The record gives the reactivity of an RNA of 177 nucleotides to 2A3 and DMS. For 2A3 the reverse transcriptase was SuperScript II with manganese.

[RMDB]
RNA sequence: GGGAACGACUCGAGUAGAGUCGAAAAACCAGGACAGCGGUGCCCUGGUCGGCUUCAGCUGCCCCGGCGUGCAGGACUCAGCUGCCCUCACAAUCCAAGGUUGGUGCCAGUGGGGACCUGAGUGGGCUACUCAAUCUCAAUUCGUUGAGAUUGAGUAAAAAGAAACAACAACAACAAC
Reactivity to 2A3 in 0.01 (KOAc 150mM, MgCl2 10mM, bicine 150mM(pH8.5), 24C), signal-to-noise 3, nucleotides 027 to 126: a000c000c000a010g020g020a010c010a020g050c030g100g090u040g000c000c010c010u080g090g000u070c050g010g000c000u210u190c080a080g000c010u030g030c010c010c000c000g050g010c050g060u090g000c020a030g040g080a020c010u010c020a020g020c040u070g020c030c000c000u020c000a020c010a020a070u030c040c020a100a100g300g020u240u100g040g020u140g040c050c030a030g010u010g010g010g010g000a010c000c010u010g010a000g000u030g010g060g030c020
Reactivity to DMS in 0.01 (KOAc 150mM, MgCl2 10mM, bicine 150mM(pH8.5), 24C), signal-to-noise 6, nucleotides 027 to 126: a080c000c010a050g020g010a030c030a030g000c120g000g000u000g000c030c010c020u000g010g000u010c110g010g000c040u000u000c090a090g020c030u000g000c030c010c010c040g010g010c080g010u010g010c030a080g000g000a070c010u000c010a020g010c090u000g010c010c000c010u010c010a030c030a120a110u010c050c050a090a200g010g010u010u010g000g010u000g010c130c160a140g010u000g000g010g000g000a100c040c010u000g000a020g020u000g000g000g010c100

It was measured as part of the RMDB library OK2TRN.
The RNA was probed in 150 mM KOAc, 10 mM MgCl2 and 150 mM bicine (pH 8.5) at 24 C.
The DMS profile rests on 13,348 reads.